[RMDB]
RNA sequence: GGGAACGACUCGAGUAGAGUCGAAAAAGGUUCGCUGUGGUGCAACUCUUAUUAGUAACUAAUCCAAAGCAAGUAAAGGAGAACAGGUUUUUAACUAUUUUUAGGCAGAUAAAAAAUAGUAUUUGACAAAAUCGAUUGUCGUUCGCGACAAUCGAAAGUGGAUUGAUAUCUUCGGAUAUCAAUCCACAAAAGAAACAACAACAACAAC
Reactivity to 2A3 in 0.01 (KOAc 150mM, MgCl2 10mM, bicine 150mM(pH8.5), 24C), signal-to-noise 1, nucleotides 027 to 156: a000g040g000u040u040c050g000c040u030g020u030g040g030u040g000c000a020a030c020u060c060u110u150a220u100u140a110g050u100a090a040c050u050a060a060u010c080c050a120a000a040g030c020a050a040g050u120a090a050a020g050g020a020g030a040a070c070a050g000g040u030u000u010u000u040a000a040c000u010a010u000u000u000u010u000a040g020g030c030a010g010a140u050a050a050a010a000a000a030u000a000g000u000a190u050u060u140g040a040c020a000a090a000a020u000c010g000a000u000u000g000u000c000g000u060u040c180g000c000g060a000c000a010a000u000c000g000a000a000a000
An RNA of 207 nucleotides, treated with 2A3 and read out base by base. The RNA was probed in 150 mM KOAc, 10 mM MgCl2 and 150 mM bicine (pH 8.5) at 24 C. For 2A3 the reverse transcriptase was SuperScript II with manganese.